[RMDB]
RNA sequence: GGGAACGACUCGAGUAGAGUCGAAAAGAGGUGCGGUAGCCUUCGUUAAUAAACCGCAAAAGAUAGUCGCAACGACGAAACGCACGCUUUAGCAGCUUAAUAUGCUGCUAGGACUCCUUCUAAACUAGCUUGCUUAUGUCCUAGGGGAUUGAAAGGUCCCCUGUGUUAAGUUCGCUUAACACAGGGGAAAAGAAACAACAACAACAAC
Reactivity to 2A3 in 0.01 (KOAc 150mM, MgCl2 10mM, bicine 150mM(pH8.5), 24C), signal-to-noise 2, nucleotides 027 to 156: g100a000g000g060u040g000c030g030g030u090a040g050c050c040u050u110c060g040u010u020a070a000u070a120a110a040c050c030g000c050a000a060a000a060g100a050u140a020g020u080c030g010c090a120a080c080g070a020c000g020a070a030a030c040g020c000a010c040g100c020u140u080u020a020g000c020a000g000c010u040u000a060a070u090a070u270g010c000u000g020c000u000a010g000g000a010c010u000c020c000u080u110c040u150a040a100a110c000u000a020g020c000u010u100g000c010u090u100a020u260g050u060c020c010u020a050g020g010g010g010a020u070u080g130a090a090a040g060g020u000

An RNA of 207 nucleotides, treated with 2A3 and read out base by base. It was measured as part of the RMDB library RSTRND. Values cover nucleotides 27 to 156.